[RMDB]
RNA sequence: GGGAACGACUCGAGUAGAGUCGAAAAACAACUGCCGGAGGUGAAUUUACUGAACAUCAACGUAAGCAUUACGUACAAAUUAUUAAUAGCUUCAAUCCAAAAGUUGUAUCAGCUCGUUAAUAUCAGCAACGUCAGUUCAAUUCGUUGAACUGACGUUAAAAGAAACAACAACAACAAC
Reactivity to 2A3 in 0.01 (KOAc 150mM, MgCl2 10mM, bicine 150mM(pH8.5), 24C), signal-to-noise 2, nucleotides 027 to 126: a030c010a010a000c020u030g020c030c010g050g000a040g130g210u090g030a050a090u130u120u140a110c080u070g040a070a000c020a120u150c070a050a000c030g020u010a020a050g160c050a100u140u000a010c010g010u080a010c030a100a200a060u070u060a060u060u130a050a040u080a140g000c010u000u060c000a020a070u030c010c020a010a020a020a020g000u030u000g010u050a050u160c060a030g050c000u050c090g100u110u130a070a030u100a100u200c020a010g000c050
Reactivity to DMS in 0.01 (KOAc 150mM, MgCl2 10mM, bicine 150mM(pH8.5), 24C), signal-to-noise 3, nucleotides 027 to 126: a100c050a050a060c010u000g000c300c160g000g030a040g010g040u000g020a080a040u010u010u010a040c120u000g020a050a100c180a050u000c100a060a060c050g010u010a030a080g010c120a100u000u000a040c070g010u000a070c150a060a080a050u010u020a040u000u030a080a070u000a090g010c020u000u000c020a080a100u000c030c020a010a110a150a030g010u010u000g000u010a080u020c090a090g000c010u000c050g010u000u000a050a020u010a060u000c100a040g000c170

The record gives the reactivity of an RNA of 177 nucleotides to 2A3 and DMS. For DMS the reverse transcriptase was MarathonRT. Reactivities are given for positions 27 through 126. DMS (dimethyl sulfate) methylates the pairing face of unpaired adenines and cytosines.